[RMDB]
RNA sequence: GGGAACGACUCGAGUAGAGUCGAAAAAAAGAUAUGGACAUGGAGAAGCUCUUGGAUUUAUUGGAGUCCCUAAUCGGAAACGAUUAGAACCUCCAAUUGUCAGAGCGUAACAUGUCCUAAGUCAAAAGUAAGAAUGUAAGUUCGCUUACAUUCUUACAAAAGAAACAACAACAACAAC
Reactivity to DMS in 0.01 (KOAc 150mM, MgCl2 10mM, bicine 150mM(pH8.5), 24C), signal-to-noise 5, nucleotides 027 to 126: a070a070a060g000a040u010a300u010g000g000a010c010a010u000g000g000a150g010a170a260g000c010u000c000u010u010g010g010a030u000u010u000a010u000u010g000g000a030g010u010c230c250c010u000a000a000u000c000g010g000a160a120a170c010g000a020u000u000a000g000a090a150c300c010u000c010c000a000a010u000u000g000u000c000a030g010a020g010c000g000u000a100a270c010a010u000g000u000c000c000u010a010a080g000u000c030a080a080a110a120
Reactivity to 2A3 in 0.01 (KOAc 150mM, MgCl2 10mM, bicine 150mM(pH8.5), 24C), signal-to-noise 4, nucleotides 027 to 126: a000a000a020g100a030u120a070u180g000g000a010c000a000u010g030g030a040g010a050a010g000c010u030c040u190u230g220g020a120u300u300u140a020u040u120g010g010a010g060u080c090c010c000u000a000a000u010c000g020g030a090a040a060c000g000a000u000u010a000g020a030a020c010c010u000c000c010a000a010u010u010g000u010c000a000g000a000g000c000g000u000a010a010c000a000u010g000u010c000c000u010a020a020g030u000c020a000a020a070a020